Structure probing data (2A3 and DMS) for a 177-nucleotide construct. The 2A3 profile rests on 15,657 reads. 2A3 adducts were read by reverse transcription with SuperScript II with manganese.
[RMDB]
RNA sequence: GGGAACGACUCGAGUAGAGUCGAAAAAAAAGAUAUGGAUCCCAUGGAGCCUACACACCCGUUUGACGUCAGUCGGAAACGACUGACCGAGGGUGUGAGGCGUUGAAAUGGGAUCCUAAGUCAAAAACAUUACAUCUAACUUCGGUUAGAUGUAAUGAAAAGAAACAACAACAACAAC
Reactivity to 2A3 in 0.01 (KOAc 150mM, MgCl2 10mM, bicine 150mM(pH8.5), 24C), signal-to-noise 3, nucleotides 027 to 126: a010a020a030a030g070a040u090a070u110g000g000a000u010c010c000c000a000u010g000g020a020g000c000c000u300a220c070a000c000a000c000c010c000g070u090u240u250g060a030c020g000u000c000a000g000u000c000g020g000a060a080a050c010g000a010c000u000g000a000c010c000g010a020g000g000g000u010g000u000g000a000g000g000c000g000u170u040g000a010a030a000u010g000g000g000a000u000c000c010u000a010a010g010u000c010a010a020a050a120a060
Reactivity to DMS in 0.01 (KOAc 150mM, MgCl2 10mM, bicine 150mM(pH8.5), 24C), signal-to-noise 7, nucleotides 027 to 126: a080a050a120a080g000a040u000a300u000g010g000a010u000c000c000c000a020u000g010g000a130g010c000c000u000a120c010a010c000a010c000c000c010g020u010u010u010g010a150c300g000u000c000a000g000u000c010g000g000a100a110a200c010g000a010c010u000g000a000c000c000g000a070g010g010g010u000g010u000g000a020g000g020c000g010u000u010g000a090a110a020u000g010g000g000a010u000c000c010u000a010a090g010u010c010a060a090a100a110a190
It was measured as part of the RMDB library TTRDES.
The RNA was probed in 150 mM KOAc, 10 mM MgCl2 and 150 mM bicine (pH 8.5) at 24 C.